RNA sequence: GGGAACGACUCGAGUAGAGUCGAAAACAUGCCAAUGCAUGCGAAAGGAUGGUUCCCCAUCCGAAACGUACGUCUCUAAUGGAUGGGAAAGCAUGCUGCCGCGUCAGGUGUUGGAUGGGAAAGCAUGCCCAACGAGGCCGUACGGAAACCAUCCAAGAUCUUACAGGGCGUUCGCGCCCUGUAAGAUAAAAGAAACAACAACAACAAC
Reactivity to 2A3 in 0.01 (KOAc 150mM, MgCl2 10mM, bicine 150mM(pH8.5), 24C), signal-to-noise 1, nucleotides 027 to 156: c050a000u000g000c050c200a270a030u250g060c000a000u000g020c040g240a260a000a000g020g030a000u000g000g000u100u120c020c010c000c000a000u000c000c050g130a130a150a000c050g000u020a000c010g000u010c000u000c000u030a220a190u130g020g000a060u110g010g020g050a040a000a000g000c000a000u000g000c000u010g020c060c000g180c000g070u030c000a130g070g060u260g060u250u130g060g000a060u000g000g000g000a010a010a010g000c020a020u010g000c070c090c000a000a060c010g000a000g000g000c120c050g060u000a000c000g050g000a010a000a000c000c000a000u000c000c000a150a000g150
The data come from the RNA Mapping Database (RMDB), library OK3TST.
This 207-nucleotide RNA was probed chemically with 2A3.
As a SHAPE reagent, 2A3 marks flexible, mostly unpaired nucleotides at the ribose 2'-OH.
For 2A3 the reverse transcriptase was SuperScript II with manganese.